[RMDB]
RNA sequence: GGGAACGACUCGAGUAGAGUCGAAAACGUCGUGAACUAGCGACAAUGCAUUAGAUCCAUCGUUAUCUAACCGAAACAUCGUGACUAGUCGUAGAAUAGAACCAGGAGAGGCCGCUGGCAAACAAAGACGGGGUUUCUGAUUCGUCGGGGGCCCCGUAAAAGAAACAACAACAACAAC
Reactivity to DMS in 0.01 (KOAc 150mM, MgCl2 10mM, bicine 150mM(pH8.5), 24C), signal-to-noise 9, nucleotides 027 to 126: c140g010u010c030g010u010g010a110a110c100u030a090g010c040g000a040c040a090a060u010g010c080a100u010u010a040g010a050u000c060c060a080u030c100g010u020u020a060u010c030u010a040a090c100c040g010a090a100a110c090a050u010c060g020u010g000a060c030u000a040g000u000c050g010u010a070g010a070a070u010a070g000a100a100c030c040a040g000g010a080g010a080g000g000c020c020g020c030u000g000g010c080a040a060a070c100a050a080a090g000
Reactivity to 2A3 in 0.01 (KOAc 150mM, MgCl2 10mM, bicine 150mM(pH8.5), 24C), signal-to-noise 7, nucleotides 027 to 126: c040g010u000c010g020u020g070a080a040c050u020a050g010c000g010a000c000a010a040u090g010c010a010u000u050a010g010a010u010c020c020a080u020c050g030u050u050a040u030c010u020a010a070c040c000g050a050a030a030c020a060u060c010g030u030g040a040c020u020a020g030u020c020g030u030a020g030a100a020u070a050g040a040a030c010c010a010g010g020a070g020a040g020g020c010c010g000c020u020g010g000c010a040a030a030c040a020a160a010g160
Structure probing data (DMS and 2A3) for a 177-nucleotide construct. DMS adducts were read by reverse transcription with MarathonRT. The 2A3 profile rests on 12,661 reads.